[RMDB]
RNA sequence: GGGAACGACUCGAGUAGAGUCGAAAAGAGCCUCCAGGAGGGUUUGAGGAGAACUCACCUCCAGAGGACCCCUUCAGCGAACAGAGGAGUCUCUACCUCGGAGGAGAAAGACCGUAGCGAUGGGGGAGAGCCAGCGCGUUCGCGCGCUGGAAAAGAAACAACAACAACAAC
Reactivity to 2A3 in 0.01 (KOAc 150mM, MgCl2 10mM, bicine 150mM(pH8.5), 24C), signal-to-noise 3, nucleotides 027 to 129: g040a030g060c020c000u000c010c040a100g040g010a030g010g050g040u080u240u300g030a020g040g060a090g040a110a050c000u010c010a050c000c000u020c000c000a000g000a000g000g000a000c000c020c000c000u020u120c040a040g010c010g030a020a010c020a050g060a030g050g020a030g060u000c020u000c020u100a140c000c010u070c030g020g020a090g020g010a070g080a020a060a010g060a040c040c010g090u060a000g010c030g030a030u050g000g000g000g000g000a030g000a000g040
Reactivity to DMS in 0.01 (KOAc 150mM, MgCl2 10mM, bicine 150mM(pH8.5), 24C), signal-to-noise 4, nucleotides 027 to 129: g020a000g000c070c010u050c020c070a130g060g010a000g020g030g010u020u070u150g040a030g030g010a200g010a090a150c020u020c030a000c040c000u020c000c030a160g030a060g030g010a060c000c000c000c000u020u040c080a110g020c000g010a050a110c080a110g000a050g040g000a160g000u010c040u000c000u040a150c020c040u010c050g070g020a230g000g040a070g030a070a090a070g010a060c130c030g000u000a060g040c120g020a000u050g000g000g000g000g000a040g030a000g000
Structure probing data (2A3 and DMS) for a 170-nucleotide construct. It was measured as part of the RMDB library 15KLIB. Values cover nucleotides 27 to 129. 2A3 adducts were read by reverse transcription with SuperScript II with manganese. DMS adducts were read by reverse transcription with MarathonRT.